Background:
The record gives the reactivity of an RNA of 207 nucleotides to DMS and 2A3. Reactivities are given for positions 27 through 156. The RNA was probed in 150 mM KOAc, 10 mM MgCl2 and 150 mM bicine (pH 8.5) at 24 C. The data come from the RNA Mapping Database (RMDB), library OK3TST. The 2A3 profile rests on 2,069 reads.

RNA sequence: GGGAACGACUCGAGUAGAGUCGAAAAUCCCAUAGGUUGCCGAAUCCGAAAGGUCGGGAGGAACCGCUUUUUGGGGUUAAUCUGCAGUGAAGCUGCAGUAGGGAUACCUUCUGUCCCGCACCCGACAGCUAACUCCGUAGGCAAUAAAGGAAGGAGAAUUAUACGCGAUAUUCGUAUCGCGUAUAAUAAAAGAAACAACAACAACAAC
Reactivity to DMS in 0.01 (KOAc 150mM, MgCl2 10mM, bicine 150mM(pH8.5), 24C), signal-to-noise 3, nucleotides 027 to 156: u000c000c000c000a210u000a070g050g050u000u000g000c020c030g000a140a300u000c040c020g020a100a120a130g030g010u000c010g030g020g000a170g020g000a130a130c040c040g000c070u010u010u000u020u000g040g010g030g000u010u010a070a110u000c000u000g020c010a010g030u000g030a100a200g030c010u000g000c000a020g010u000a090g000g010g010a060u000a040c040c090u000u000c040u000g010u000c090c000c000g000c110a090c020c000c000g020a060c110a060g030c030u000a090a200c010u000c030c000g020u000a140g020g030c030a090a090u000a080a110a080g010g010a070a060g030g020a210g010a160
Reactivity to 2A3 in 0.01 (KOAc 150mM, MgCl2 10mM, bicine 150mM(pH8.5), 24C), signal-to-noise 3, nucleotides 027 to 156: u030c020c000c010a010u070a020g080g000u000u000g030c000c000g060a070a090u050c010c010g070a080a060a030g050g050u030c070g030g010g000a040g040g000a060a100c060c020g050c130u150u170u020u070u280g060g000g000g000u000u050a030a020u040c000u000g000c000a000g000u050g250a120a020g140c000u000g000c000a000g000u010a020g020g000g000a010u080a090c000c000u030u030c010u040g030u000c000c000c000g020c000a040c010c000c000g040a080c060a030g020c020u060a040a020c000u000c030c010g040u030a000g010g000c000a000a000u050a030a030a000g040g000a010a010g030g020a040g100a100